Structure probing data (DMS and 2A3) for a 207-nucleotide construct. For DMS, 3,574 sequencing reads were counted. For DMS the reverse transcriptase was MarathonRT. 2A3 adducts were read by reverse transcription with SuperScript II with manganese. Reactivities are given for positions 27 through 156. Conditions: 150 mM KOAc, 10 mM MgCl2 and 150 mM bicine (pH 8.5), 24 C.

RNA sequence: GGGAACGACUCGAGUAGAGUCGAAAAGUACGUUGAGUUGAUCAGUGAGUGGAAGAUUCAUAAGAGAAUUGAAUUGCAGUUCCAAGCAUUCAUCGAUGGAUUCAACGAAUUGAUACCGCAUGAAUUGGUCAACGUUUUCGACGAAAGAGAAUUGGAGAUACAUUGUACCCUUCGGGGUACAAUGUAUAAAAGAAACAACAACAACAAC
Reactivity to DMS in 0.01 (KOAc 150mM, MgCl2 10mM, bicine 150mM(pH8.5), 24C), signal-to-noise 2, nucleotides 027 to 156: g050u000a070c010g030u000u010g000a080g000u000u000g010a030u000c020a060g020u000g000a200g070u000g030g020a180a270g010a060u000u020c010a120u010a150a160g010a220g000a070a080u000u000g010a070a070u000u010g060c070a110g020u000u000c100c100a070a220g020c030a060u010u000c020a060u000c050g010a120u000g000g000a050u010u000c030a030a140c030g000a120a040u020u000g020a110u000a120c030c000g010c070a080u000g010a100a100u000u000g020g000u000c030a030a030c040g000u000u000u030u000c040g010a070c030g000a050a090a150g010a080g040a070a110u010u010g010g000a140g010
Reactivity to 2A3 in 0.01 (KOAc 150mM, MgCl2 10mM, bicine 150mM(pH8.5), 24C), signal-to-noise 4, nucleotides 027 to 156: g140u110a040c020g000u020u010g000a040g040u010u000g030a020u000c000a000g030u000g100a040g030u060g010g050a110a060g000a100u010u030c020a020u130a250a080g060a030g080a200a150u120u060g020a010a010u130u130g030c010a010g100u160u080c050c010a030a010g040c010a020u010u020c010a010u050c030g060a080u130g070g020a040u120u030c070a050a050c050g030a030a000u050u010g020a030u060a180c000c040g030c040a050u090g070a110a050u050u030g020g000u000c010a010a000c020g000u020u020u110u070c020g000a010c010g050a010a070a000g130a010g020a030a170u190u140g070g030a130g000